An RNA of 207 nucleotides, treated with DMS and 2A3 and read out base by base. The 2A3 profile rests on 1,257 reads. Conditions: 150 mM KOAc, 10 mM MgCl2 and 150 mM bicine (pH 8.5), 24 C. For DMS, 2,633 sequencing reads were counted. For 2A3 the reverse transcriptase was SuperScript II with manganese. DMS adducts were read by reverse transcription with MarathonRT.
RNA sequence: GGGAACGACUCGAGUAGAGUCGAAAACGGUUGUUCGCAACCGAGGCGCGAUAUGGAUCCUGACUCGCUUGGAUUUAUACUGAACUUUCGGAAACGAAUCAAUAAGUAUUGUCAGCGAGGAUGGAUCCUAAGUCAGUUUUUCAGCUUCGGCUGAAAAUCUAUGUAUGGCCUUCGGGCCAUACAUAGAAAAAGAAACAACAACAACAAC
Reactivity to DMS in 0.01 (KOAc 150mM, MgCl2 10mM, bicine 150mM(pH8.5), 24C), signal-to-noise 2, nucleotides 027 to 156: c050g020g030u000u010g040u000u020c060g000c050a040a110c000c000g010a010g000g030c000g040c060g050a040u000a300u000g030g010a010u020c000c000u000g010a300c010u010c070g050c010u010u010g060g000a040u000u000u010a010u000a010c020u000g000a260a220c020u000u000u010c030g010g010a150a160a220c010g010a030a010u010c020a050a070u010a190a030g000u000a000u000u010g000u000c040a050g000c010g000a020g010g000a300u010g000g010a020u000c010c000u000a010a040g000u000c040a160g000u000u080u000u000u000c030a040g010c000u000u000c240g000g060c000u000g000a020a010a020a080
Reactivity to 2A3 in 0.01 (KOAc 150mM, MgCl2 10mM, bicine 150mM(pH8.5), 24C), signal-to-noise 2, nucleotides 027 to 156: c040g030g000u010u010g010u040u010c100g000c060a030a010c020c020g010a040g010g090c090g000c020g020a020u020a070u270g010g000a000u020c000c000u020g090a020c000u010c000g100c060u130u200g120g000a030u160u300u150a000u060a000c010u000g000a050a010c070u020u000u000c000g000g060a110a090a070c020g020a010a000u000c000a060a300u060a050a000g010u000a000u010u010g030u000c000a010g010c000g000a010g000g010a000u080g010g010a000u000c000c000u000a000a000g000u000c010a000g010u080u000u040u100u270c030a030g010c010u000u090c100g070g000c000u000g030a050a010a030a110